[RMDB]
RNA sequence: GGGAACGACUCGAGUAGAGUCGAAAAGCGUCUGUCCGGGUCGGGGCGCGUAAGCCGCCCAACCUCAUCCCGUUCCCUCGCGGAACAGGGAGUGUUAGCGCACGGCUGAGGGAACUACAAAAGCCUCCUUAAAUGGAUACUUCGGUAUCCAUUUAAGAAAAGAAACAACAACAACAAC
Reactivity to DMS in 0.01 (KOAc 150mM, MgCl2 10mM, bicine 150mM(pH8.5), 24C), signal-to-noise 4, nucleotides 027 to 126: g010c030g010u010c020u000g000u000c030c050g020g010g040u010c080g010g000g010g010c030g000c020g000u020a080a130g000c150c030g030c040c010c020a110a050c030c020u010c080a140u000c010c010c010g030u000u000c000c000c020u010c300g040c120g010g000a030a020c050a050g010g000g000a050g000u000g010u000u010a080g010c090g000c060a080c070g010g010c050u020g000a120g010g000g000a060a110c060u010a140c150a020a050a130a120g000c030c020u000c080
Reactivity to 2A3 in 0.01 (KOAc 150mM, MgCl2 10mM, bicine 150mM(pH8.5), 24C), signal-to-noise 3, nucleotides 027 to 126: g020c020g030u030c050u050g090u020c020c020g000g000g030u060c090g030g020g000g020c020g000c030g050u160a100a020g060c060c020g040c010c000c000a000a020c000c010u030c020a130u020c000c020c010g000u000u010c000c000c000u070c140g060c230g010g010a010a040c030a140g030g020g000a060g030u090g010u020u090a040g010c040g000c060a010c040g080g000c050u050g000a040g020g010g020a080a060c050u090a040c140a030a120a030a010g040c000c010u020c000